[RMDB]
RNA sequence: GGGAACGACUCGAGUAGAGUCGAAAAGAUAUGGAGAUCUUUGAGGAACUACGAAGACGCUCGGAAACGAGCGUAUUCGCCAAUGAUGAGAUCUCCUAAGUCAAAGAGCCACCUUCGGGUGGCUCAACGUUUUAUAUACGUUCGCGUAUAUAAAACGAAAAGAAACAACAACAACAAC
Reactivity to 2A3 in 0.01 (KOAc 150mM, MgCl2 10mM, bicine 150mM(pH8.5), 24C), signal-to-noise 3, nucleotides 027 to 126: g020a010u050a010u100g000g010a010g010a000u000c020u040u030u040g040a060g050g060a200a240c180u210a070c300g000a000a000g020a000c000g000c000u000c000g010g000a010a020a010c000g000a000g000c010g000u000a000u000u000c000g050c030c050a300a300u120g020a010u010g010a020g000a000u000c010u030c000c000u000a000a000g010u010c000a000a000a300g000a000g020c010c000a010c010c010u030u110c260g160g000g010u000g000g000c000u010c000a000a000
Reactivity to DMS in 0.01 (KOAc 150mM, MgCl2 10mM, bicine 150mM(pH8.5), 24C), signal-to-noise 4, nucleotides 027 to 126: g000a030u000a300u010g000g010a010g020a020u000c000u000u000u000g010a180g000g000a180a090c140u010a230c000g000a010a000g000a020c010g010c000u000c000g000g000a050a060a090c000g020a010g010c000g000u000a000u000u000c010g000c050c150a080a110u020g000a200u010g000a010g010a020u000c000u000c000c000u000a010a060g010u000c010a070a130a150g000a010g020c000c000a010c000c000u000u000c200g010g010g040u000g010g010c000u000c010a010a050
This 177-nucleotide RNA was probed chemically with 2A3 and DMS. For DMS the reverse transcriptase was MarathonRT. For DMS, 4,406 sequencing reads were counted.